The record gives the reactivity of an RNA of 207 nucleotides to 2A3 and DMS. Conditions: 150 mM KOAc, 10 mM MgCl2 and 150 mM bicine (pH 8.5), 24 C. Source: RMDB library OK3TST, as collected in RNAgym.
RNA sequence: GGGAACGACUCGAGUAGAGUCGAAAAGGCUGCUGCCGGAGCCGAUACCGGAAUACGAGACCUUAUGUGCGGUCGAAUGCACUGAAGUACGAAAGUACGAAGAGGUCAGACCGAGGACCGAGACUCGAUAUGCUCGGUAGAUGGAGCUUUACAUCAAGACCAUACUCCAUUUCGAUGGAGUAUGGUCAAAAGAAACAACAACAACAAC
Reactivity to 2A3 in 0.01 (KOAc 150mM, MgCl2 10mM, bicine 150mM(pH8.5), 24C), signal-to-noise 1, nucleotides 027 to 156: g020g000c000u030g000c020u100g040c040c000g040g000a010g010c000c090g010a000u030a070c020c000g000g120a090a040u140a110c030g030a030g050a130c000c010u110u000a100u110g030u010g000c050g010g000u150c090g110a100a020u100g000c020a060c000u030g040a100a000g000u000a000c030g010a100a010a180g000u000a000c000g000a100a000g030a000g000g000u010c010a000g020a020c070c020g000a070g060g000a030c040c020g010a010g070a100c000u010c060g010a040u020a020u110g100c030u000c000g050g000u000a030g000a000u030g040g000a000g000c000u120u060u110a050c040a040u030c010a010a160
Reactivity to DMS in 0.01 (KOAc 150mM, MgCl2 10mM, bicine 150mM(pH8.5), 24C), signal-to-noise 1, nucleotides 027 to 156: g000g070c010u000g070c000u000g040c000c040g030g010a080g000c040c000g060a090u000a020c000c100g000g000a040a000u000a110c020g010a110g030a030c010c070u010u010a020u000g050u000g050c020g000g050u000c190g000a150a160u000g010c010a020c050u010g000a130a300g000u000a010c000g000a170a050a300g030u000a030c020g030a190a090g020a160g070g020u000c000a260g030a080c070c000g040a130g010g010a120c000c020g000a090g020a200c030u030c000g010a190u000a020u000g020c020u000c000g130g030u000a010g000a110u000g020g050a230g020c020u000u000u000a070c100a090u000c030a080a300